RNA sequence: GGGAACGACUCGAGUAGAGUCGAAAAACACUGGUACGAUCAGUCCAUGACGAUCGACUGCUCAUGCAUGUGAUCAGUCGCGACGACUAUAGUCUAGCAUCUAGUAGCUAGCUCAUGCACAUCAGUAGAAUGGGGACGAAUUCGUUCGUCCCCAUUCAAAAGAAACAACAACAACAAC
Reactivity to DMS in 0.01 (KOAc 150mM, MgCl2 10mM, bicine 150mM(pH8.5), 24C), signal-to-noise 3, nucleotides 027 to 126: a080c160a070c050u000g010g030u000a100c140g000a020u020c030a060g010u000c010c150a060u000g020a080c220g010a070u010c140g000a030c000u000g020c110u000c060a300u000g020c140a050u010g020u000g010a100u000c160a030g000u000c000g030c190g010a070c120g000a060c010u000a080u010a060g010u020c010u010a020g000c010a090u010c140u000a210g020u010a130g010c000u000a030g010c020u010c030a060u030g000c060a050c300a030u010c020a050g000u000a110
Reactivity to 2A3 in 0.01 (KOAc 150mM, MgCl2 10mM, bicine 150mM(pH8.5), 24C), signal-to-noise 3, nucleotides 027 to 126: a010c040a000c030u020g050g020u120a050c050g000a060u050c030a050g050u000c040c010a200u230g100a030c110g090a090u090c000g020a020c000u000g000c010u040c040a040u070g000c010a000u080g030u020g000a090u140c120a000g010u010c010g050c080g130a140c170g010a000c020u030a010u060a110g100u050c010u010a000g030c000a080u090c040u130a140g080u110a010g200c010u000a000g010c010u000c010a000u030g000c020a020c020a130u070c000a010g050u080a060
Conditions: 150 mM KOAc, 10 mM MgCl2 and 150 mM bicine (pH 8.5), 24 C. This 177-nucleotide RNA was probed chemically with DMS and 2A3. Values cover nucleotides 27 to 126. The DMS profile rests on 1,615 reads. It was measured as part of the RMDB library OK2TRN.